[RMDB]
RNA sequence: GGGAACGACUCGAGUAGAGUCGAAAAGAUAUGGACAUGCGGAGGCGCACUGCCACUUCGGAAACGAAUGCAGUGAACUACGCUGACGCAUGUCCUAAGUCAAAACCAGCCCCUUCGGGGGCUGGAAGUUUAUAGCUUGGUUCGCCAAGCUAUAAACAAAAGAAACAACAACAACAAC
Reactivity to DMS in 0.01 (KOAc 150mM, MgCl2 10mM, bicine 150mM(pH8.5), 24C), signal-to-noise 3, nucleotides 027 to 126: g010a060u010a300u000g000g000a010c020a010u000g010c000g000g010a300g000g010c010g000c020a010c010u020g000c020c110a060c120u000u010c000g000g010a130a120a160c000g000a030a010u010g000c000a010g000u000g010a080a070c100u020a240c020g010c010u010g010a300c000g000c000a010u000g000u000c000c010u000a000a060g010u020c040a090a070a120a140c000c000a010g000c000c000c000c000u000u010c180g020g010g000g010g000c000u000g010g010a010a030
Reactivity to 2A3 in 0.01 (KOAc 150mM, MgCl2 10mM, bicine 150mM(pH8.5), 24C), signal-to-noise 1, nucleotides 027 to 126: g010a000u050a030u100g000g000a010c000a010u010g000c010g010g020a010g010g000c020g000c070a000c020u010g010c000c030a130c060u020u010c010g050g030a070a100a040c010g030a000a020u300g010c010a000g020u000g040a060a030c070u170a030c110g000c010u000g000a000c000g000c000a000u010g010u000c000c000u010a000a000g010u000c010a010a000a000a070c010c010a000g020c050c000c010c000u030u060c240g170g000g000g000g000c020u000g000g000a000a000
Structure probing data (DMS and 2A3) for a 177-nucleotide construct. Source: RMDB library TTRDEL, as collected in RNAgym.